[RMDB]
RNA sequence: GGGAACGACUCGAGUAGAGUCGAAAAGAACUUUGGCCGGCUCGGAAUAGAAUCAGGGGGUGCAAACUGCCCACUGGCAGAAAGGAUUAUAGCAAACGCGUACCCUAUUGCAAUACAGCCCGGCCAACAUAGACUACUCUAUUCGUAGAGUAGUCAAACUCAAACUGGGAUUCGUCCCAGUUUGAGUAAAAGAAACAACAACAACAAC
Reactivity to DMS in 0.01 (KOAc 150mM, MgCl2 10mM, bicine 150mM(pH8.5), 24C), signal-to-noise 1, nucleotides 027 to 156: g010a110a140c030u020u020u010g010g010c000c000g000g000c030u000c120g030g000a110a200u000a200g010a040a060u000c060a040g010g020g010g000g030u010g040c130a040a090a090c130u000g100c000c000c160a060c180u010g010g070c030a040g000a110a070a080g040g000a050u000u000a140u050a110g010c030a040a060a050c070g010c010g040u010a150c040c000c000u000a140u040u000g010c010a090a080u000a150c050a080g010c130c030c100g060g010c020c000a000a000c080a140u010a180g030a010c010u010a020c000u000c010u000a070u010u000c170g030u010a020g000a060g040u000a010g030u010c000a000a010
Reactivity to 2A3 in 0.01 (KOAc 150mM, MgCl2 10mM, bicine 150mM(pH8.5), 24C), signal-to-noise 3, nucleotides 027 to 156: g010a080a010c020u040u000u020g000g000c010c010g000g030c020u060c070g060g100a070a100u160a110g050a060a050u200c110a090g020g000g000g010g000u120g000c030a070a080a130c000u020g060c000c020c090a140c150u150g010g000c030a000g070a050a070a010g110g040a010u120u110a150u300a180g060c060a130a040a040c060g000c040g030u100a070c000c000c000u030a110u000u120g060c050a000a050u050a100c010a050g010c020c050c000g000g020c020c000a000a000c000a000u060a000g000a000c000u000a000c000u000c000u000a020u030u020c100g100u100a000g000a000g000u000a000g010u000c000a000a010
Conditions: 150 mM KOAc, 10 mM MgCl2 and 150 mM bicine (pH 8.5), 24 C. Structure probing data (DMS and 2A3) for a 207-nucleotide construct. The data come from the RNA Mapping Database (RMDB), library M2RFPK.